The data come from the RNA Mapping Database (RMDB), library ARCHII. An RNA of 207 nucleotides, treated with 2A3 and DMS and read out base by base. For DMS, 2,887 sequencing reads were counted. The RNA was probed in 150 mM KOAc, 10 mM MgCl2 and 150 mM bicine (pH 8.5) at 24 C. For 2A3, 1,802 sequencing reads were counted. Values cover nucleotides 27 to 156.
RNA sequence: GGGAACGACUCGAGUAGAGUCGAAAAAAGCCGAGAGUUGGGCUGUGUGAUCUGGGCGAAGGCUGGGGUCGCACAGCUCCUAAAGAGGAGGGCAAUGCGUGAGGCUGGUUUCACAGAGCAGCGACCACCUCCCGCUCUCGGCAGUGGAAGGAUAACGGAUAAGUUUAUGGUUCGCCAUAAACUUAUCAAAAGAAACAACAACAACAAC
Reactivity to 2A3 in 0.01 (KOAc 150mM, MgCl2 10mM, bicine 150mM(pH8.5), 24C), signal-to-noise 3, nucleotides 027 to 156: a020a000g060c000c010g010a010g000a010g010u060u220g000g000g000c000u000g000u000g000u020g000a010u020c030u100g110g000g020c060g080a200a050g130g000c020u070g000g030g000g000u000c000g000c000a000c000a000g000c000u030c010c000u020a010a020a000g060a070g000g010a010g010g030g000c130a080a070u200g010c020g020u070g020a050g000g090c030u020g030g070u110u200u200c230a240c010a050g050a050g030c000a000g010c000g010a010c010c040a030c020c010u000c010c000c000g000c000u000c000u010c010g030g010c000a010g010u030g020g060a060a040g040g060a120u120a190a070c100g040
Reactivity to DMS in 0.01 (KOAc 150mM, MgCl2 10mM, bicine 150mM(pH8.5), 24C), signal-to-noise 1, nucleotides 027 to 156: a060a130g040c010c000g030a030g010a050g020u000u010g010g010g000c030u000g030u000g010u000g000a080u000c020u010g040g040g010c000g040a160a100g030g030c010u000g020g000g000g010u000c010g030c010a000c000a060g000c010u000c010c040u000a010a060a070g000a090g030g000a040g010g020g020c100a090a110u000g020c040g000u010g020a090g010g010c000u030g010g010u000u010u010c110a100c040a150g010a120g060c020a130g010c110g000a110c050c030a110c010c010u000c010c010c000g030c000u010c000u000c000g000g000c010a030g000u000g010g030a110a080g000g000a150u000a070a130c120g030